[RMDB]
RNA sequence: GGGAACGACUCGAGUAGAGUCGAAAAGUCUCUAUCUUCGGAUAGAGACAAAUAUAAGUACGACUUAGAGCUAGAUCAAUUAAUAUCGUCGACAUCGUAUAAAAAGAGGUAUGUUCGCAUACCUCAACUUUUUGCUAUAGUUCGCUAUAGCAAAAAGAAAAGAAACAACAACAACAAC
Reactivity to 2A3 in 0.01 (KOAc 150mM, MgCl2 10mM, bicine 150mM(pH8.5), 24C), signal-to-noise 4, nucleotides 027 to 126: g000u010c000u000c000u020a010u000c010u020u050c190g160g000a000u000a000g000a000g000a000c000a000a010a000u010a000u000a040a060g030u010a000c010g020a010c020u030u180a030g010a020g130c060u110a050g040a090u050c050a070a060u170u170a160a110u110a030u180c070g040u010c000g020a020c010a030u030c010g030u010a040u060a070a110a020a010a020g010a000g000g000u010a000u020g020u020u060c160g000c090a010u000a000c020c010u000c000a000a000
Reactivity to DMS in 0.01 (KOAc 150mM, MgCl2 10mM, bicine 150mM(pH8.5), 24C), signal-to-noise 5, nucleotides 027 to 126: g000u000c000u000c000u000a010u000c000u000u020c200g040g010a010u000a000g000a010g010a000c000a010a050a060u010a090u010a080a180g000u000a020c020g000a020c060u000u010a250g000a050g010c120u030a080g000a030u010c150a110a120u020u010a090a080u010a040u000c020g010u000c010g000a140c300a070u000c020g010u010a030u000a010a040a060a140a110g000a020g000g000u000a000u000g000u000u020c220g010c010a020u010a000c000c000u000c000a010a020
The record gives the reactivity of an RNA of 177 nucleotides to 2A3 and DMS. The RNA was probed in 150 mM KOAc, 10 mM MgCl2 and 150 mM bicine (pH 8.5) at 24 C.